[RMDB]
RNA sequence: GGGAACGACUCGAGUAGAGUCGAAAAUUUUGAGCUUUCGAGCUCAAAACAACUGGUGACCCGACCAGGAAAAACAGAUUUACACGAAGUGAAAGAUCGAAAGGGCCACCAUGUUCGCAUGGUGGAAGCGUACUUCAUUAUUCGUAAUGAAGUACGCAAAAGAAACAACAACAACAAC
Reactivity to DMS in 0.01 (KOAc 150mM, MgCl2 10mM, bicine 150mM(pH8.5), 24C), signal-to-noise 3, nucleotides 027 to 126: u000u000u010u000g000a020g000c000u000u000u010c160g000a030g020c000u000c000a010a000a010a040c280a100a110c010u000g010g010u000g000a090c000c000c010g020a090c000c010a010g000g020a050a060a080a060a060c120a150g000a050u000u000u010a270c030a030c040g030a120a110g000u000g020a020a120a120g000a010u000c030g000a070a070a090g010g010g000c000c000a000c000c000a010u000g010u000u010c200g020c010a000u010g000g050u010g010g010a010a060
Reactivity to 2A3 in 0.01 (KOAc 150mM, MgCl2 10mM, bicine 150mM(pH8.5), 24C), signal-to-noise 4, nucleotides 027 to 126: u010u010u000u000g000a000g000c000u080u030u190c240g080a000g000c000u000c010a000a000a000a000c010a030a130c000u010g010g010u020g050a090c000c000c000g010a000c000c010a010g110g050a060a100a020a000a000c040a060g040a050u100u090u170a020c080a010c130g230a300a060g030u050g080a170a060a020g030a040u040c030g040a090a050a020g070g040g010c010c000a000c000c000a000u010g050u030u030c220g010c060a000u010g000g010u010g020g000a010a000
The record gives the reactivity of an RNA of 177 nucleotides to DMS and 2A3. DMS adducts were read by reverse transcription with MarathonRT. The data come from the RNA Mapping Database (RMDB), library M2PK50. The 2A3 profile rests on 5,376 reads. For DMS, 3,041 sequencing reads were counted.